[RMDB]
Description
Structure probing data (DMS and 2A3) for a 177-nucleotide construct. For DMS the reverse transcriptase was MarathonRT. The data come from the RNA Mapping Database (RMDB), library OK1LIB. The reactions ran in a buffer of 150 mM KOAc, 10 mM MgCl2 and 150 mM bicine (pH 8.5), at 24 C. The 2A3 profile rests on 510 reads. For DMS, 1,204 sequencing reads were counted. Reactivities are given for positions 27 through 126.
RNA sequence: GGGAACGACUCGAGUAGAGUCGAAAAGAAGUGGCAGGGACAUGCCCCAAAAGCUCGUUCUAGCAACAUAUGUUUGGCUAGUUCGAGCGAUUAGUCUAGAGGAGCGUCCUCUCGCCUGUUGACGAGAGGUCGGCUACUCGUUCGCGAGUAGCCGACCAAAAGAAACAACAACAACAAC
Reactivity to DMS in 0.01 (KOAc 150mM, MgCl2 10mM, bicine 150mM(pH8.5), 24C), signal-to-noise 1, nucleotides 027 to 126: g000a160a040g000u050g000g040c010a000g000g050g020a050c110a130u010g010c050c000c010c030a060a120a100a210g030c000u000c000g050u000u000c110u000a000g000c010a010a020c050a090u010a150u050g000u030u020u010g070g010c000u000a010g000u000u000c000g010a000g020c010g010a000u000u000a130g020u000c080u000a020g010a140g000g000a050g010c140g010u000c000c000u030c000u000c010g000c000c010u000g000u000u010g000a160c000g030a000g000a110
Reactivity to 2A3 in 0.01 (KOAc 150mM, MgCl2 10mM, bicine 150mM(pH8.5), 24C), signal-to-noise 1, nucleotides 027 to 126: g130a110a020g150u110g050g000c000a020g070g010g000a000c020a010u060g020c000c000c000c000a060a080a000a050g000c000u000c000g000u000u000c000u000a000g000c050a000a050c060a060u290a290u250g180u070u020u110g200g000c000u000a000g000u000u000c050g000a000g000c000g000a060u060u170a000g030u000c110u100a060g010a080g170g000a060g030c010g000u000c000c000u010c000u000c030g000c040c100u030g060u070u130g040a090c000g000a000g000a000